This 177-nucleotide RNA was probed chemically with DMS.
The RNA was probed in 150 mM KOAc, 10 mM MgCl2 and 150 mM bicine (pH 8.5) at 24 C.

RNA sequence: GGGAACGACUCGAGUAGAGUCGAAAAAUCUCGACGCCAUCGAGGCGGGCGGAAAGAUGCGGCGAGGCUGGUGUAUUCAGGCGCCAUGCCUCCGGCAGGAUACGCUGAGGCGAAGCCUGUGCCAGAACAUUAGGUCACCCUUCGGGGUGACCUAAUGAAAAGAAACAACAACAACAAC
Reactivity to DMS in 0.01 (KOAc 150mM, MgCl2 10mM, bicine 150mM(pH8.5), 24C), signal-to-noise 1, nucleotides 027 to 126: a120u000c020u010c020g000a170c030g040c050c030a080u000c130g000a090g000g000c070g000g000g020c000g010g040a130a050a090g000a120u000g010c060g040g040c040g010a030g000g020c020u020g000g040u000g000u000a150u010u010c220a050g000g030c040g010c020c120a050u020g010c000c000u020c080c030g000g020c000a000g000g000a120u000a130c080g030c020u000g000a080g000g020c010g000a100a130g010c030c000u020g010u000g030c070c030a100g010a150a150